[RMDB]
RNA sequence: GGGAACGACUCGAGUAGAGUCGAAAAUACAAAAUAUGUGACGUUAUUUCAAAAAGUGUAUAGAUGACUUUCCGCCAUCUGUGCUCAGUAAUCAAGGUCUUAUUACACAAUUUUCAUAUUUAUUGCCACAGAAAUUUUGAUCAUAAAACAAAGGUUAUAGUAAAAUGGGAUUCGUCCCAUUUUACUAAAAAGAAACAACAACAACAAC
Reactivity to 2A3 in 0.01 (KOAc 150mM, MgCl2 10mM, bicine 150mM(pH8.5), 24C), signal-to-noise 2, nucleotides 027 to 156: u190a010c020a020a020a020a030u120a070u030g000u010g040a010c030g010u050u070a070u000u240u210c060a110a090a020a050a080g000u040g010u010a020u030a040g020a020u020g000a010c040u080u060u020c050c030g050c020c000a020u030c020u020g010u060g020c000u000c060a010g030u140a040a070u100c120a000a090g040g050u010c040u150u020a080u060u140a040c050a000c000a070a100u090u050u110u070c000a030u020a140u100u060u210a060u110u060g040c010c000a030c010a020g120a060a180a050u060u060u060u100g000a030u110c070a020u100a100a120a050a060c060a020a130a020g100g030u200u200a090
Reactivity to DMS in 0.01 (KOAc 150mM, MgCl2 10mM, bicine 150mM(pH8.5), 24C), signal-to-noise 2, nucleotides 027 to 156: u010a160c010a050a030a010a110u020a030u020g010u000g020a090c070g000u000u000a030u000u010u010c020a100a120a080a130a190g000u010g000u010a010u000a020g010a040u010g000a010c010u000u020u030c290c230g000c010c010a040u010c000u030g020u000g010c000u000c030a140g030u000a060a030u010c040a040a110g030g000u000c020u010u000a060u010u000a100c070a060c080a050a070u000u000u000u000c030a060u000a060u000u000u010a140u020u010g020c000c010a040c020a060g000a110a070a050u010u000u000u000g000a080u000c020a080u010a080a050a060a150c030a090a070a170g010g010u010u000a080